[RMDB]
RNA sequence: GGGAACGACUCGAGUAGAGUCGAAAAACUGAUACCUUACGAGGUAUCAGAAUGACUUCGUGGUAGAGCGCCACGAACGGAAAAUAAAGAAAGCUCGAUUGAAACGCACAGUGUACGCACGGUGCGAAAAAGUCGAUCCAGUUCGCUGGAUCGACAACUUAGACGUACAGUUCGCUGUACGUCUAAGAAAAGAAACAACAACAACAAC
Reactivity to 2A3 in 0.01 (KOAc 150mM, MgCl2 10mM, bicine 150mM(pH8.5), 24C), signal-to-noise 3, nucleotides 027 to 156: a000c000u010g000a000u000a000c000c010u070u070a070c260g140a020g000g000u000a000u000c000a000g010a000a030u100g070a080c060u010u000c000g010u000g010g000u020a100g030a000g020c010g000c000c000a000c000g000a000a010c020g050g040a060a050a010a000u050a000a010a020g190a040a040a000g000c050u010c010g060a080u060u220g060a120a060a020c000g000c000a000c000a020g000u000g020u080a020c150g020c100a000c000g000g000u000g000c000g030a060a050a000a000a000g000u000c010g000a000u000c000c000a000g010u050u070c180g090c140u000g010g010a000u000c000g000a010c000a000a000
Reactivity to DMS in 0.01 (KOAc 150mM, MgCl2 10mM, bicine 150mM(pH8.5), 24C), signal-to-noise 1, nucleotides 027 to 156: a230c010u000g000a000u000a000c000c000u010u010a180c300g060a100g030g060u000a000u010c000a000g000a080a070u020g000a190c080u000u000c000g000u000g000g000u010a040g010a020g040c040g000c000c010a020c000g000a000a030c090g000g030a090a020a070a100u010a050a120a120g020a030a010a100g010c020u000c010g040a200u010u010g010a090a100a170c030g000c000a030c000a000g030u000g020u000a070c250g040c020a030c010g020g040u010g060c010g000a000a020a070a050a080g030u000c020g000a010u010c000c010a010g040u000u020c300g030c060u000g020g000a020u010c010g000a000c000a000a030
Notes: This 207-nucleotide RNA was probed chemically with 2A3 and DMS. The data come from the RNA Mapping Database (RMDB), library M2RFPK. The 2A3 profile rests on 2,973 reads. The DMS profile rests on 2,397 reads.